[RMDB]
RNA sequence: GGGAACGACUCGAGUAGAGUCGAAAAUUUACCGCGUUUAACCGACGCUUCAUUUUGCCGGAACUUCGCGAUGCCGUGCGUACCGUCAGCGCCGAUAUUGUUUGCCUGCAGGAAGUGAUGGGCGCGCACCCUCUGCAAGGUUCGCCUUGCAGAGGGUAAAAGAAACAACAACAACAAC
Reactivity to 2A3 in 0.01 (KOAc 150mM, MgCl2 10mM, bicine 150mM(pH8.5), 24C), signal-to-noise 2, nucleotides 027 to 126: u080u080u070a140c050c020g000c030g010u010u040u100a070a020c020c020g010a020c020g050c010u050u050c050a140u050u260u210u090g040c000c040g060g000a060a060c030u090u070c090g010c030g090a060u030g000c000c010g080u130g010c000g050u030a190c020c020g030u030c010a010g010c010g000c020c050g020a080u080a070u100u170g100u020u010u240g090c050c020u040g060c010a030g040g010a050a020g000u010g050a050u120g010g010g010c030g000c000g000c010
Reactivity to DMS in 0.01 (KOAc 150mM, MgCl2 10mM, bicine 150mM(pH8.5), 24C), signal-to-noise 2, nucleotides 027 to 126: u010u010u020a110c070c050g040c050g010u000u010u000a120a120c080c140g000a090c020g000c050u010u000c090a130u000u030u000u000g020c030c020g000g010a110a110c130u010u010c070g020c040g010a050u000g040c040c000g000u020g000c050g020u000a090c050c050g020u000c070a050g000c030g010c030c010g010a060u010a070u010u010g000u000u010u020g000c040c000u000g000c080a080g000g000a040a020g010u000g010a050u010g000g020g000c080g000c040g080c170